Structure probing data (DMS and 2A3) for a 207-nucleotide construct. Source: RMDB library RNAMAK, as collected in RNAgym. The RNA was probed in 150 mM KOAc, 10 mM MgCl2 and 150 mM bicine (pH 8.5) at 24 C. For DMS the reverse transcriptase was MarathonRT.

RNA sequence: GGGAACGACUCGAGUAGAGUCGAAAAGCCCAGGUUCGCCUGGGCAAAAAGAUAUGGAUAGCUAAGACAGUGACGGGAGCUUGCUUUCGGAAACGAAAGAUAAGCUUUGAUCGUCAUCGAGCUAUCCUAAGUCAAAAAACCUCCGUUCGCGGAGGAAGAUCAUGUAGAACUUCGGUUCUACAUGAUCAAAAGAAACAACAACAACAAC
Reactivity to DMS in 0.01 (KOAc 150mM, MgCl2 10mM, bicine 150mM(pH8.5), 24C), signal-to-noise 1, nucleotides 027 to 156: g020c000c000c000a030g000g000u000u000c240g010c010c000u000g000g000g000c000a000a010a070a060a010g000a140u010a300u000g000g010a050u010a000g000c000u000a120a210g000a100c240a040g010u000g010a020c000g010g000g010a000g010c000u000u030g000c010u010u000u000c000g020g010a050a120a290c020g040a000a010a010g000a080u000a010a020g000c000u000u000u000g000a100u000c000g030u000c010a040u000c020g010a030g000c010u010a000u010c000c000u000a010a060g000u000c080a020a180a060a050a090a070c010c000u000c020c000g010u000u000c200g010c000g010g020a030g050g000a000a000
Reactivity to 2A3 in 0.01 (KOAc 150mM, MgCl2 10mM, bicine 150mM(pH8.5), 24C), signal-to-noise 3, nucleotides 027 to 156: g000c000c000c000a000g030g010u050u060c250g050c070c010u020g000g000g000c010a000a020a000a000a000g010a010u030a010u070g010g000a010u000a010g000c030u060a100a140g020a140c090a090g080u010g050a000c020g040g020g000a010g000c000u000u000g000c010u000u000u000c010g020g030a090a080a050c020g020a010a000a000g040a100u090a040a010g000c000u060u050u040g070a100u080c010g000u000c000a010u030c000g020a000g000c000u000a010u000c000c010u000a020a020g010u010c030a020a050a030a040a090a130c000c010u000c000c000g010u040u090c270g030c010g070g000a000g000g000a000a020

For 2A3, 4,680 sequencing reads were counted.